[RMDB]
RNA sequence: GGGAACGACUCGAGUAGAGUCGAAAACCUUGUGUUCACUCAGCCUACAGAUUUGGUACCUGGAUUUCUGUCCAUGGUGAUUUCUGUCACCUUACUACUGAAGAAGAUACCAUUCCAGUGGACCACUAGAUCUACGCGUAUUCGUACGCGUAGAUCUAAAAGAAACAACAACAACAAC
Reactivity to DMS in 0.01 (KOAc 150mM, MgCl2 10mM, bicine 150mM(pH8.5), 24C), signal-to-noise 1, nucleotides 027 to 126: c010c030u000u000g000u000g000u000u000c010a030c020u010c210a140g000c000c080u000a050c150a070g000a020u000u000u000g010g040u000a020c000c020u000g020g000a110u020u000u030c080u000g030u070c090c130a100u000g010g000u000g010a010u000u010u020c260u030g000u010c000a010c010c020u050u000a170c110u000a080c080u000g000a000a020g000a090a060g000a110u010a100c020c050a030u000u000c020c080a030g000u000g010g000a010c030c080a050c220u000
Reactivity to 2A3 in 0.01 (KOAc 150mM, MgCl2 10mM, bicine 150mM(pH8.5), 24C), signal-to-noise 4, nucleotides 027 to 126: c000c000u010u060g060u010g010u040u020c010a010c010u050c030a040g070c000c050u110a100c060a100g030a110u030u080u090g010g020u010a020c010c010u040g020g080a070u030u120u090c060u140g040u010c030c070a050u090g010g030u000g010a030u110u210u140c120u180g010u020c020a020c000c000u080u170a120c070u030a020c030u060g040a040a020g020a000a000g050a120u060a030c020c010a030u050u030c040c000a010g000u020g030g000a020c000c020a020c040u040